[RMDB]
RNA sequence: GGGAACGACUCGAGUAGAGUCGAAAACUGCCGCCGAUGGAGGAGUUGCAGGCGUGCGUGCGGCGGCGAGGCAAGUGGAUCCGCUACAGCGCGCUGGACGCCAAGGCCACGCAUGACCUGGCGCUGGCUGGGUUCUAAGUUUCGACUUAGAACCCAGAAAAGAAACAACAACAACAAC
Reactivity to 2A3 in 0.01 (KOAc 150mM, MgCl2 10mM, bicine 150mM(pH8.5), 24C), signal-to-noise 2, nucleotides 027 to 126: c000u030g040c000c020g010c020c020g140a120u100g080g040a070g060g050a090g050u140u120g100c030a010g010g000c030g030u060g010c030g030u030g020c020g010g000c000g000g000c010g000a050g020g070c010a110a050g060u040g050g140a150u020c030c010g050c040u050a040c030a060g040c030g000c030g000c060u050g020g030a030c030g000c020c010a020a020g070g040c010c030a030c030g040c030a020u050g080a300c000c000u030g040g010c010g000c030u050g040g000
Reactivity to DMS in 0.01 (KOAc 150mM, MgCl2 10mM, bicine 150mM(pH8.5), 24C), signal-to-noise 2, nucleotides 027 to 126: c020u000g020c030c010g010c040c050g010a100u010g010g020a120g010g010a130g030u010u000g010c070a070g000g000c030g030u010g010c030g000u010g020c040g010g000c080g010g000c030g020a060g020g000c060a080a130g030u010g030g010a160u020c040c040g000c050u000a100c100a130g020c030g010c100g000c050u000g010g010a070c020g000c000c030a090a280g000g000c050c000a030c070g000c060a100u000g010a120c020c010u020g030g000c020g010c050u010g000g020